[RMDB]
Source: RMDB library 15KREP, as collected in RNAgym. The record gives the reactivity of an RNA of 177 nucleotides to 2A3 and DMS. The 2A3 profile rests on 2,197 reads. The RNA was probed in 150 mM KOAc, 10 mM MgCl2 and 150 mM bicine (pH 8.5) at 24 C. Values cover nucleotides 27 to 126. 2A3 adducts were read by reverse transcription with SuperScript II with manganese.
RNA sequence: GGGAACGACUCGAGUAGAGUCGAAAAUCAGGCACUCUUUGAGUCCUUAGAGUUUACUGAAUUGUCUUUUACUAAUUACAAGCUCCAGUCUCAGAUUGUAACUGGCCUUUUUAAAGAUUGCUCUAGACUGAUAACAACAGUUCGCUGUUGUUAUCAGAAAAGAAACAACAACAACAAC
Reactivity to 2A3 in 0.01 (KOAc 150mM, MgCl2 10mM, bicine 150mM(pH8.5), 24C), signal-to-noise 3, nucleotides 027 to 126: u070c010a030g000g040c020a000c020u030c000u020u040u100g050a040g050u050c010c000u010u040a030g020a000g010u030u100u120a120c070u090g070a040a040u070u020g040u030c040u040u180u060u100a080c040u080a040a080u100u030a030c000a030a010g010c020u000c030c010a040g050u000c010u000c050a040g040a180u080u100g010u030a040a030c010u010g040g040c010c010u130u150u030u000u050a040a050a020g040a090u050u180g030c020u010c010u020a020g020a060
Reactivity to DMS in 0.01 (KOAc 150mM, MgCl2 10mM, bicine 150mM(pH8.5), 24C), signal-to-noise 3, nucleotides 027 to 126: u010c040a030g020g000c250a060c020u000c020u000u000u010g010a110g010u010c090c080u000u010a040g010a050g000u000u010u010a060c080u000g000a040a090u010u000g010u010c060u010u010u000u000a090c100u000a040a050u000u010a090c120a020a060g000c030u000c030c100a050g010u000c060u000c050a080g000a100u000u010g010u010a070a080c050u000g020g010c120c030u000u000u000u000u000a030a080a070g000a100u000u000g030c110u010c020u000a040g010a300